[RMDB]
RNA sequence: GGGAACGACUCGAGUAGAGUCGAAAAUUUGAUCUUCCACAAGGGGUAGGCUACGGGUGAAACCUCUUAGGCUAAUACUUCUAUGAAGAGAUGCCUUGGAUAGGGUAACAGCGGCGGAUAUUGGUGAGAACAUUCAAUGGUUCGCCAUUGAAUGUUCAAAAGAAACAACAACAACAAC
Reactivity to 2A3 in 0.01 (KOAc 150mM, MgCl2 10mM, bicine 150mM(pH8.5), 24C), signal-to-noise 4, nucleotides 027 to 126: u080u030u120g060a040u020c040u050u020c030c000a060c050a070a020g060g030g000g010u100a040g030g020c040u080a040c060g020g040g030u060g080a130a050a010c000c030u000c000u020u010a000g000g000c010u040a060a050u020a210c010u030u010c100u130a160u300g040a010a040g010a000g030a040u110g000c000c000u010u030g000g010a010u070a150g020g050g000u040a050a010c000a030g020c020g030g000c050g030g010a020u030a040u100u100g050g000u050g030a070
Reactivity to DMS in 0.01 (KOAc 150mM, MgCl2 10mM, bicine 150mM(pH8.5), 24C), signal-to-noise 4, nucleotides 027 to 126: u010u040u020g000a090u030c070u000u000c030c040a080c140a110a090g010g000g000g000u000a050g020g010c040u000a090c200g000g000g000u010g000a090a100a110c060c020u000c030u000u000a040g000g010c000u000a080a170u010a030c010u000u010c000u030a130u040g010a040a010g010a060g000a290u020g000c000c000u020u000g010g000a090u030a070g000g000g000u000a070a080c130a080g020c060g000g010c040g000g000a070u000a060u000u010g000g010u000g010a170